[RMDB]
RNA sequence: GGGAACGACUCGAGUAGAGUCGAAAACGGCAAAAAAGCAAACUGGACCACCAAGGAUAAAAGAGAUCUUAUCCAAGGAUGCAAAAGAUAAUCUCACUUUUGACACCCACUGAUCUCGAACUUAAAGAAAACCGAGACUACUUCGGUAGUCUCGGAACAUAGAUAGAUGCUUCGGCAUCUAUCUAUGAAAAGAAACAACAACAACAAC
Reactivity to 2A3 in 0.01 (KOAc 150mM, MgCl2 10mM, bicine 150mM(pH8.5), 24C), signal-to-noise 6, nucleotides 027 to 156: c010g040g010c040a030a040a030a060a060a050g080c070a090a070a040c080u100g000g010a070c020c010a030c040c020a090a060g000g000a030u070a110a060a040a030g010a000g010a000u000c010u030u060a040u080c060c040a040a070g020g000a020u040g000c010a010a020a010a000g010a080u130a190a190u130c080u050c100a050c010u060u010u010u030g080a090c020a050c020c010c010a060c100u070g000a010u010c000u000c010g020a060a050c060u150u180a130a040a060g090a030a070a050a020c000c000g000a000g000a000c000u000a010c000u030u060c170g070g000u000a000g000u000c000u000c000g000g000a000a000
Reactivity to DMS in 0.01 (KOAc 150mM, MgCl2 10mM, bicine 150mM(pH8.5), 24C), signal-to-noise 2, nucleotides 027 to 156: c060g010g010c020a000a020a080a160a030a070g020c020a040a070a090c120u000g000g000a180c030c000a050c010c020a070a280g020g000a070u000a030a060a110a150g020a110g000a080u000c020u010u000a020u000c050c020a030a240g010g010a020u000g000c000a020a030a050a030g000a080u000a080a180u000c110u000c090a090c020u000u010u000u010g000a190c010a000c000c010c020a280c080u000g010a020u000c010u010c070g000a070a080c090u000u000a050a020a140g000a070a080a090a140c000c000g010a060g020a020c000u010a010c010u000u000c220g040g040u000a000g020u000c000u000c000g000g000a000a010